The record gives the reactivity of an RNA of 177 nucleotides to DMS and 2A3.

[RMDB]
RNA sequence: GGGAACGACUCGAGUAGAGUCGAAAAGAUAUGGACCAGAACUACAGCUAAGCAUUCCAACAGCUGAAGUAUAUUCGGAAACGAAUAUACUUCAGACAUGGAAUGAACGCGCUGCUGGUCCUAAGUCGCCUUAUAUUGGGUUCGCCCAAUAUAAGGCAAAAGAAACAACAACAACAAC
Reactivity to DMS in 0.01 (KOAc 150mM, MgCl2 10mM, bicine 150mM(pH8.5), 24C), signal-to-noise 2, nucleotides 027 to 126: g030a120u000a300u000g010g000a030c020c010a020g000a110a050c000u000a300c020a030g000c010u000a240a200g060c000a020u000u000c000c000a120a130c290a220g000c000u000g000a010a000g010u000a000u000a010u000u000c000g010g000a140a140a270c010g010a010a020u010a000u000a000c010u000u010c010a000g000a020c130a140u000g010g000a020a020u010g000a030a020c140g020c160g030c030u000g000c020u000g020g010u000c000c010u000a010a050g010u000c060
Reactivity to 2A3 in 0.01 (KOAc 150mM, MgCl2 10mM, bicine 150mM(pH8.5), 24C), signal-to-noise 2, nucleotides 027 to 126: g090a020u200a050u290g000g000a000c000c000a010g050a130a060c290u300a110c300a000g000c010u070a150a010g040c000a000u010u030c020c010a180a120c060a300g100c040u010g000a000a000g020u000a000u000a010u000u010c020g050g000a070a060a050c020g010a000a010u010a000u020a010c010u000u000c000a000g000a010c020a050u100g020g010a030a020u000g000a080a070c080g050c000g000c120u020g000c000u000g000g000u020c000c010u020a020a020g060u040c140
Description:
For DMS, 1,081 sequencing reads were counted. Conditions: 150 mM KOAc, 10 mM MgCl2 and 150 mM bicine (pH 8.5), 24 C. Values cover nucleotides 27 to 126.